[RMDB]
RNA sequence: GGGAACGACUCGAGUAGAGUCGAAAAGUCCUGUGACCAUGUGGAACGCAGGCUGCCAAAUCGUGGCUCUGAACUUCCAAACAUACGGCAAGGAGAUGGAUGUGAACCAAGGACGAUUCCUGCCUAACCCAUUUAAUCAUUUCGAUGAUUAAAUGGGAAAAGAAACAACAACAACAAC
Reactivity to DMS in 0.01 (KOAc 150mM, MgCl2 10mM, bicine 150mM(pH8.5), 24C), signal-to-noise 7, nucleotides 027 to 126: g010u000c000c000u010g010u000g000a190c080c040a090u020g010u010g020g010a030a070c190g000c120a020g000g010c070u000g000c020c100a070a080a110u050c270g020u040g010g000c010u030c020u010g010a130a140c120u000u010c010c020a050a130a100c090a070u010a070c130g000g000c070a070a090g010g010a090g000a080u010g000g000a070u030g010u010g010a070a080c100c030a070a060g000g020a040c050g000a120u010u000c020c010u000g010c080c010u010a080a190
Reactivity to 2A3 in 0.01 (KOAc 150mM, MgCl2 10mM, bicine 150mM(pH8.5), 24C), signal-to-noise 9, nucleotides 027 to 126: g040u050c000c000u020g030u040g040a110c020c030a100u150g060u170g080g020a090a020c060g010c050a010g010g050c230u060g010c010c010a090a110a070u270c160g070u080g020g000c020u010c020u110g070a110a090c020u040u000c010c000a060a100a050c040a060u160a060c070g030g010c060a090a080g080g010a090g040a040u110g040g020a060u100g070u110g140a060a040c030c010a040a040g030g010a010c020g020a030u040u030c010c010u010g030c000c010u050a080a080